[RMDB]
RNA sequence: GGGAACGACUCGAGUAGAGUCGAAAAGCUUUAAAUAAUGCGGGUCUACGUCAUCAAUGACGUUGUACCACGCAUCAUUACUGUACACCUUUGGGCUUAGGUCUAGAUGUCCACAUAAAUAAUUAUGGCUGGUUGAACUAUUCGUAGUUCAACCAGCAAAAGAAACAACAACAACAAC
Reactivity to 2A3 in 0.01 (KOAc 150mM, MgCl2 10mM, bicine 150mM(pH8.5), 24C), signal-to-noise 3, nucleotides 027 to 126: g000c000u030u060u110a060a020a000u100a050a000u040g000c000g000g000g000u000c010u040a010c000g000u000c000a170u090c100a100a280u220g000a000c000g020u000u010g040u090a040c010c030a230c010g010c000a000u020c000a000u000u070a010c000u030g010u090a010c000a030c080c000u080u070u080g000g000g010c000u060u100a060g040g080u110c030u080a090g000a070u060g030u000c040c000a030c010a030u150a020a070a010u220a100a090u240u070a150u100g100